About this RNA
The record gives the reactivity of an RNA of 207 nucleotides to 2A3. Conditions: 150 mM KOAc, 10 mM MgCl2 and 150 mM bicine (pH 8.5), 24 C. Values cover nucleotides 27 to 156. It was measured as part of the RMDB library OK3TST. The 2A3 profile rests on 515 reads.

RNA sequence: GGGAACGACUCGAGUAGAGUCGAAAAAAGGGGAGGUUCAAAGUUAUACCUAUGCCUGUGCUGCAAUAGGUGACAAUACAAGCUGGGGUGAGUCAAUGCAGCCACAGCACUUUCUGAACUACUUGAAGCCUAUCCUAACCUGUGCACCAGACUGGGACCGUAUACUGAACUUCGGUUCAGUAUACGGAAAAGAAACAACAACAACAAC
Reactivity to 2A3 in 0.01 (KOAc 150mM, MgCl2 10mM, bicine 150mM(pH8.5), 24C), signal-to-noise 1, nucleotides 027 to 156: a000a040g040g000g010g000a020g040g020u010u000c070a000a170a000g000u080u060a160u140a110c000c000u030a060u050g010c000c020u080g120u140g050c020u000g040c100a000a200u030a130g000g140u080g010a030c070a060a000u080a100c040a070a200g030c060u050g000g000g010g030u010g070a040g100u130c140a080a020u090g120c000a000g040c010c040a040c000a000g020c030a030c100u080u210u050c090u070g060a050a040c030u040a010c000u030u000g060a010a000g000c020c000u000a080u000c000c000u030a060a110c000c000u060g090u150g050c030a070c060c000a010g030a140c080u080g000g000g080a010